[RMDB]
RNA sequence: GGGAACGACUCGAGUAGAGUCGAAAAGACACAUGCUUGACAGUUAUUCUGUCAUGCUAUGUGGUGAUAAUUCUGCUAAGUUUUGGGAAGAGGCAUUCUAUAGAGAUCUCUAUAGUUCGCCUACCACCCUAUGUUGGUUCUUCGGAACCAACAUAGGAAAAGAAACAACAACAACAAC
Reactivity to 2A3 in 0.01 (KOAc 150mM, MgCl2 10mM, bicine 150mM(pH8.5), 24C), signal-to-noise 1, nucleotides 027 to 126: g110a010c000a000c000a000u020g010c000u030u020g000a000c000a000g000u050u120a180u300u060c010u000g000u000c000a010u010g000c020u050a000u030g000u000g000g060u010g000a040u110a160a050u090u020c010u050g190c120u140a190a150g110u120u000u210u120g050g000g010a090a100g030a070g190g010c010a000u000u010c000u000a010u000a030g090a100g040a300u090c040u020c000u270a000u000a020g000u020u000c050g000c000c000u000a000c000c020a030c030
Reactivity to DMS in 0.01 (KOAc 150mM, MgCl2 10mM, bicine 150mM(pH8.5), 24C), signal-to-noise 1, nucleotides 027 to 126: g000a070c000a000c000a000u000g000c010u000u000g000a010c000a000g000u000u010a170u000u010c000u000g020u000c000a010u000g010c020u000a000u000g010u000g000g030u010g000a110u000a120a120u000u000c000u010g030c100u010a160a140g000u000u000u000u000g000g000g000a170a130g000a020g000g000c000a080u000u000c000u030a000u000a000g000a020g010a160u010c200u000c000u000a000u000a010g010u000u000c050g040c000c010u000a050c010c010a160c170
The record gives the reactivity of an RNA of 177 nucleotides to 2A3 and DMS. 2A3 adducts were read by reverse transcription with SuperScript II with manganese. Conditions: 150 mM KOAc, 10 mM MgCl2 and 150 mM bicine (pH 8.5), 24 C. It was measured as part of the RMDB library 15KREP.